Structure probing data (DMS and 2A3) for a 177-nucleotide construct. DMS adducts were read by reverse transcription with MarathonRT. 2A3 is a SHAPE reagent: it acylates the 2'-hydroxyl of flexible nucleotides of all four kinds. Source: RMDB library TTRDES, as collected in RNAgym. The 2A3 profile rests on 1,509 reads.
RNA sequence: GGGAACGACUCGAGUAGAGUCGAAAAGAUAUGGAGCGUCUUGGUGGGAGAAUACGGAUCGGAAACGAUCCGGUUCUUUGAUCACCACUGGACGCUCCUAAGUCAAACGCUCACUUCGGUGAGCGAAGUAUACCCUCCGGUUCGCCGGAGGGUAUACAAAAGAAACAACAACAACAAC
Reactivity to DMS in 0.01 (KOAc 150mM, MgCl2 10mM, bicine 150mM(pH8.5), 24C), signal-to-noise 1, nucleotides 027 to 126: g030a050u020a300u010g010g010a000g020c000g040u000c000u000u040g030g060u010g000g000g010a040g020a030a030u000a070c010g070g000a000u000c000g000g010a150a220a220c000g000a000u010c020c010g010g000u000u000c000u010u010u040g010a170u040c090a130c000c000a030c300u000g000g000a050c000g090c000u010c000c000u010a010a090g080u000c010a160a070a190c070g010c010u000c000a010c010u000u050c160g040g020u000g050a000g030c010g040a000a010
Reactivity to 2A3 in 0.01 (KOAc 150mM, MgCl2 10mM, bicine 150mM(pH8.5), 24C), signal-to-noise 1, nucleotides 027 to 126: g040a010u050a030u170g000g000a000g010c010g000u000c080u250u200g090g000u020g010g110g000a060g000a020a040u170a300c040g000g000a010u000c000g020g100a060a000a060c030g000a010u000c030c020g000g020u020u000c040u120u130u240g160a190u180c050a020c060c000a010c040u040g030g000a020c010g000c010u010c010c000u010a000a000g010u000c000a050a030a050c040g000c010u000c000a000c000u060u050c300g090g020u000g000a000g000c000g010a060a040